An RNA of 207 nucleotides, treated with 2A3 and read out base by base. Values are in units of 0.01, from 0 to 300, in steps of 10. The 2A3 profile rests on 1,220 reads. It was measured as part of the RMDB library M2RFPK. 2A3 adducts were read by reverse transcription with SuperScript II with manganese.
RNA sequence: GGGAACGACUCGAGUAGAGUCGAAAACGGUUACGCCUUCUUUACCGUUAUCAAGGAAGGUACUCGGCCAUGCUAAGGGAAGCAUUAUUCCUUAGGCGCAUGUCGCCGCCAGCAUGGUGUGAGCGGAAAAAGUAUGCUGGGUUCGCCCAGCAUACAACAUACGCUGGUCCUUCGGGACCAGCGUAUGAAAAGAAACAACAACAACAAC
Reactivity to 2A3 in 0.01 (KOAc 150mM, MgCl2 10mM, bicine 150mM(pH8.5), 24C), signal-to-noise 2, nucleotides 027 to 156: c010g000g020u040u020a030c090g010c010c010u010u040c010u020u080u050a030c010c030g230u110u090a080u100c110a000a020g040g010a000a010g010g010u010a030c010u000c020g040g010c010c000a000u020g000c020u060a050a060g000g000g000a010a030g030c140a000u200u110a120u150u090c010c010u030u090a060g000g000c000g040c040a130u220g140u300c020g010c040c040g010c020c010a000g010c000a010u010g000g000u050g170u120g000a050g000c090g010g060a160a030a000a000a000g020u020a000u000g000c010u000g010g000g020u030u080c130g110c020c000c000a000g020c000a000u000a000c000a010a000